[RMDB]
Chemical mapping of a 177-nucleotide RNA with DMS and 2A3. Source: RMDB library OK2TRN, as collected in RNAgym. The RNA was probed in 150 mM KOAc, 10 mM MgCl2 and 150 mM bicine (pH 8.5) at 24 C.
RNA sequence: GGGAACGACUCGAGUAGAGUCGAAAACAACUGCGAGUUCUGCAGAUUUUGGUCUUGAAGAAGGGCGAAGACGUUACGCUGCGGAAAAUCGACCUUUACCGCCAUUACCUCCUCUUGAAACACCACCAAAUCACAGGUAGUUCGCUACCUGUGAUUUAAAAGAAACAACAACAACAAC
Reactivity to DMS in 0.01 (KOAc 150mM, MgCl2 10mM, bicine 150mM(pH8.5), 24C), signal-to-noise 4, nucleotides 027 to 126: c070a100a120c080u010g010c020g010a120g030u000u010c020u010g030c020a020g000a130u000u000u000u000g000g010u000c020u000u000g010a120a100g000a080a070g030g020g000c030g000a030a080g010a050c070g010u000u020a040c160g020c080u010g020c010g010g000a060a040a060a070u000c040g020a090c080c030u000u000u010a090c120c010g020c020c040a090u000u000a090c040c020u000c030c010u000c050u000u000g000a110a070a080c120a070c100c040a130c090c110
Reactivity to 2A3 in 0.01 (KOAc 150mM, MgCl2 10mM, bicine 150mM(pH8.5), 24C), signal-to-noise 2, nucleotides 027 to 126: c040a040a040c030u050g000c000g050a060g180u110u050c030u120g020c000a020g000a080u020u040u050u140g100g020u000c010u020u140g090a120a150g050a010a030g040g050g030c010g020a050a000g070a020c010g020u020u050a030c110g020c100u060g020c050g050g020a050a000a020a090u070c050g040a080c010c000u000u070u030a070c000c000g060c010c030a040u050u000a060c010c000u020c000c000u000c010u010u010g030a110a010a010c010a030c050c020a020c030c060